Structure probing data (2A3) for a 207-nucleotide construct. High 2A3 reactivity points to a flexible backbone, as in loops and unpaired stretches. The 2A3 profile rests on 367 reads. The RNA was probed in 150 mM KOAc, 10 mM MgCl2 and 150 mM bicine (pH 8.5) at 24 C.

RNA sequence: GGGAACGACUCGAGUAGAGUCGAAAACCCAGUUCCGGGGCCGUUCACUGGAUCCGAAGCCUCUAGAAGGAUAAUAUAGGCACUCCAUACCCUACUCUGACUCAAUACGUCCCCGUCGUACAGAAUGCAAGGGCAUCCCUGUUCGCAGGGAUGCCAAUCAGGGUAACAUGUUCGCAUGUUACCCUGAAAAAGAAACAACAACAACAAC
Reactivity to 2A3 in 0.01 (KOAc 150mM, MgCl2 10mM, bicine 150mM(pH8.5), 24C), signal-to-noise 1, nucleotides 027 to 156: c020c000c000a000g110u110u150c010c050g000g000g030g010c000c010g020u120u090c140a070c080u040g040g010a050u050c010c020g050a060a000g020c010c000u010c060u070a120g130a110a090g220g040a080u090a300a070u140a070u100a240g010g000c040a040c050u040c040c000a040u050a130c000c000c030u030a050c020u020c000u050g060a060c000u050c080a000a110u080a040c030g020u050c020c000c000c000g010u050c000g000u100a000c000a080g140a300a000u030g110c080a070a020g060g010g000c020a000u020c000c000c000u040g040u030u040c230g000c140a010g000g000g010a000u000g010c010c000a000a000